[RMDB]
RNA sequence: GGGAACGACUCGAGUAGAGUCGAAAAAUUGCGUAUAGUGAUGUGUCUUUUUUUGUAUUAUUUAUCUUCGGACGAUUGAUCCUCAACCAUUUGUUCAAAUGCUUCACGAACUUGUGGUACUGUCAUACGUGUAGCAAGUAUUCGUACUUGCUACACGAAAAGAAACAACAACAACAAC
Reactivity to 2A3 in 0.01 (KOAc 150mM, MgCl2 10mM, bicine 150mM(pH8.5), 24C), signal-to-noise 5, nucleotides 027 to 126: a000u060u080g010c010g010u110a100u100a190g090u060g070a030u030g070u010g030u100c020u110u060u030u030u020u060u100g060u090a160u200u030a090u040u260u040a100u040c010u030u070c050g060g020a040c010g060a080u030u140g050a060u020c000c020u030c040a010a020c010c000a010u010u010u050g010u000u010c020a040a060a170u160g090c070u100u150c090a040c120g010a020a000c000u000u010g000u010g010g020u060a090c050u080g070u090c030a080u060a170
Reactivity to DMS in 0.01 (KOAc 150mM, MgCl2 10mM, bicine 150mM(pH8.5), 24C), signal-to-noise 4, nucleotides 027 to 126: a070u000u010g020c060g050u010a080u010a090g020u000g020a010u000g010u000g000u000c000u010u000u020u000u010u000u000g000u010a080u000u000a070u010u000u000a090u020c040u000u000c150g020g000a080c090g010a080u000u000g000a080u000c040c030u010c090a080a050c040c010a030u000u000u000g010u000u000c020a100a060a080u000g010c170u000u000c100a100c180g000a020a030c040u000u000g010u000g010g010u010a080c140u010g000u010c110a070u010a130